[RMDB]
RNA sequence: GGGAACGACUCGAGUAGAGUCGAAAAGCUGAUAAAGAGCGUCAUCAUAUCUUCAUAGAACCUGAAGGAAUUCAUACUCAGGAAGUCUACGUAAACGGUCUGUCUACAUCUAUGCCUUUUGAUGUACUAUCAUGACACAAUUCGUUGUGUCAUGAUAAAAAGAAACAACAACAACAAC
Reactivity to 2A3 in 0.01 (KOAc 150mM, MgCl2 10mM, bicine 150mM(pH8.5), 24C), signal-to-noise 8, nucleotides 027 to 126: g000c010u030g030a100u120a110a170a020g080a020g020c010g040u020c010a040u030c010a010u050a060u150c050u090u020c010a060u020a080g030a080a080c010c010u030g030a120a030g040g040a030a010u150u060c030a010u060a110c020u010c020a000g000g030a030a020g070u000c010u030a050c050g090u080a050a070a030c040g030g050u020c030u030g060u030c010u030a020c010a020u010c010u050a050u120g070c020c020u100u120u080u090g060a040u060g020u040a040c020
Reactivity to DMS in 0.01 (KOAc 150mM, MgCl2 10mM, bicine 150mM(pH8.5), 24C), signal-to-noise 9, nucleotides 027 to 126: g010c080u000g010a090u010a050a110a100g010a070g020c030g020u000c050a060u010c050a070u010a060u000c050u000u010c030a070u000a060g000a070a130c030c020u010g010a060a060g000g020a110a140u000u010c150a060u010a160c040u000c020a020g000g010a100a100g010u000c020u010a030c090g010u000a040a050a090c120g000g000u000c040u000g010u000c040u000a040c050a050u000c030u000a080u010g000c060c030u000u000u000u000g010a060u000g010u000a070c280